Conditions: 150 mM KOAc, 10 mM MgCl2 and 150 mM bicine (pH 8.5), 24 C. The record gives the reactivity of an RNA of 177 nucleotides to DMS and 2A3.

RNA sequence: GGGAACGACUCGAGUAGAGUCGAAAAACAUUUGGUGGUGUGACUCAACUCAACCAAACUAAAUAUUGAGAAACUUUUUGUAUCGCCAAAGAAGCACAGCCUUUUUGCAGAAGGGGCAAGGGGGGGAAUUGAUACUGACUUUCGAGUCAGUAUCAAUAAAAGAAACAACAACAACAAC
Reactivity to DMS in 0.01 (KOAc 150mM, MgCl2 10mM, bicine 150mM(pH8.5), 24C), signal-to-noise 3, nucleotides 027 to 126: a090c110a180u000u010u000g020g010u010g020g010u000g010u000g000a110c090u000c130a090a180c050u000c060a070a030c070c100a030a100a120c140u000a080a110a100u000a130u010u000g010a070g000a140a100a100c110u010u000u000u000u010g000u010a020u000c060g010c020c030a010a040a050g000a090a070g000c070a070c190a080g000c060c040u000u000u000u000u000g000c090a070g000a060a070g000g020g000g020c040a030a070g000g000g000g000g010g000g040a070
Reactivity to 2A3 in 0.01 (KOAc 150mM, MgCl2 10mM, bicine 150mM(pH8.5), 24C), signal-to-noise 2, nucleotides 027 to 126: a030c050a100u050u030u020g060g000u040g010g010u000g020u030g060a030c030u060c080a050a030c040u040c040a020a080c030c080a130a060a030c080u120a110a050a150u230a040u080u050g000a040g020a060a080a030c030u150u090u050u100u080g040u040a040u020c000g000c020c010a010a050a030g100a030a010g040c060a040c030a080g010c000c010u030u120u040u130u170g010c000a000g000a150a020g010g010g060g000c030a010a040g000g010g010g030g000g010g000a060
For 2A3, 1,381 sequencing reads were counted. Reactivities are given for positions 27 through 126. For DMS the reverse transcriptase was MarathonRT.